An RNA of 177 nucleotides, treated with DMS and 2A3 and read out base by base. 2A3 adducts were read by reverse transcription with SuperScript II with manganese. In probing experiments dimethyl sulfate is read out at A N1 and C N3, which are open when not base-paired. The 2A3 profile rests on 10,122 reads. It was measured as part of the RMDB library M2PK50.
RNA sequence: GGGAACGACUCGAGUAGAGUCGAAAAGCCUAACAGUUCGCUGUUAGGCAAAUGGACAGACUUCGCAACUGUGAAAAACACAACAGAAGUGUCUAUGCGAGGAUCGUUGCGUCUUCGGACGCAACAAGAGUAAUGAGGAGUUCGCUCCUCAUUACUCAAAAGAAACAACAACAACAAC
Reactivity to DMS in 0.01 (KOAc 150mM, MgCl2 10mM, bicine 150mM(pH8.5), 24C), signal-to-noise 4, nucleotides 027 to 126: g010c000c000u010a010a010c000a000g010u000u010c230g030c010u010g000u000u000a000g010g010c000a000a010a040u000g000g010a040c040a140g000a100c010u000u000c010g000c120a100a200c190u000g020u000g000a080a100a050a120a110c030a010c040a030a070c140a150g000a040a020g010u000g000u000c030u000a030u010g000c050g000a030g020g010a100u010c120g000u000u000g000c000g010u000c000u000u010c150g010g000a000c000g000c000a000a000c010a070a070
Reactivity to 2A3 in 0.01 (KOAc 150mM, MgCl2 10mM, bicine 150mM(pH8.5), 24C), signal-to-noise 5, nucleotides 027 to 126: g000c000c000u000a000a000c010a000g050u090u110c150g060c120u000g000u010u000a000g000g000c000a030a040a020u030g010g000a010c010a040g120a060c010u020u000c020g010c060a090a070c080u030g000u020g150a140a030a010a070a010c030a010c020a080a090c030a080g050a080a030g070u010g010u030c030u040a060u080g060c050g080a050g090g040a140u150c100g010u010u000g000c000g010u000c000u010u030c180g090g010a000c000g000c000a000a000c000a000a020